[RMDB]
RNA sequence: GGGAACGACUCGAGUAGAGUCGAAAAGGCAUCUUGGGAUCGCGCAAUAUCGGUGAGAAUGCGGGCGGCGGGGUGGACAAUAUCCAGAAGCUGUUGCCAGAUGCGAUCAGUCAUUCUCCUUCAAGCAAUGUACUAUCUGGUUCGCCAGAUAGUACAUAAAAGAAACAACAACAACAAC
Reactivity to DMS in 0.01 (KOAc 150mM, MgCl2 10mM, bicine 150mM(pH8.5), 24C), signal-to-noise 5, nucleotides 027 to 126: g010g000c050a020u010c030u000u010g010g010g010a060u000c030g020c070g000c120a080a090u010a090u000c070g020g010u010g010a120g020a070a050u000g010c060g010g020g020c080g000g020c070g010g000g010g020u000g000g010a040c070a070a070u000a300u010c020c020a070g000a130a170g000c020u000g010u000u000g010c010c030a120g010a080u010g000c060g000a080u000c090a050g000u000c030a060u000u000c010u000c010c130u000u010c110a070a100g000c260a060
Reactivity to 2A3 in 0.01 (KOAc 150mM, MgCl2 10mM, bicine 150mM(pH8.5), 24C), signal-to-noise 4, nucleotides 027 to 126: g030g010c020a030u040c080u110u130g080g040g000a020u080c040g000c000g000c050a060a080u070a070u220c080g020g020u110g030a080g050a060a040u110g020c030g000g020g030c000g030g000c060g000g020g000g040u050g010g010a020c060a100a100u120a060u170c030c010a020g040a080a000g040c010u030g020u070u040g020c010c020a030g000a090u110g010c010g020a060u020c040a000g050u050c000a020u090u000c020u010c000c000u080u120c060a080a080g060c020a060